An RNA of 177 nucleotides, treated with 2A3 and read out base by base. 2A3 adducts were read by reverse transcription with SuperScript II with manganese. Conditions: 150 mM KOAc, 10 mM MgCl2 and 150 mM bicine (pH 8.5), 24 C.

RNA sequence: GGGAACGACUCGAGUAGAGUCGAAAACGAUGAGAAGAGCACUGUGCGCAACGACAAAAGUAACGGCGAACAUGACGACAAAAGCGGGGUACGCAGUUACAAGAACAACAGUGCAGACGGCGCCCGCGCCCGAGUCCAUCUUCGGAUGGACUCGGGCAAAAGAAACAACAACAACAAC
Reactivity to 2A3 in 0.01 (KOAc 150mM, MgCl2 10mM, bicine 150mM(pH8.5), 24C), signal-to-noise 1, nucleotides 027 to 126: c070g030a030u200g080a070g040a180a060g000a000g060c020a000c000u000g000u060g030c070g050c050a040a150c000g120a070c030a060a150a030a050g000u010a010a000c030g020g000c040g020a010a050c010a100u190g180a050c020g000a000c010a020a140a000a000g000c000g010g000g040g060u000a030c000g000c000a000g010u020u000a110c070a120a130g140a140a030c090a070a000c000a000g010u000g030c000a000g020a010c020g030g010c010g030c000c000c000g000c010
Reactivities are given for positions 27 through 126.
The data come from the RNA Mapping Database (RMDB), library OK1LIB.
The 2A3 profile rests on 747 reads.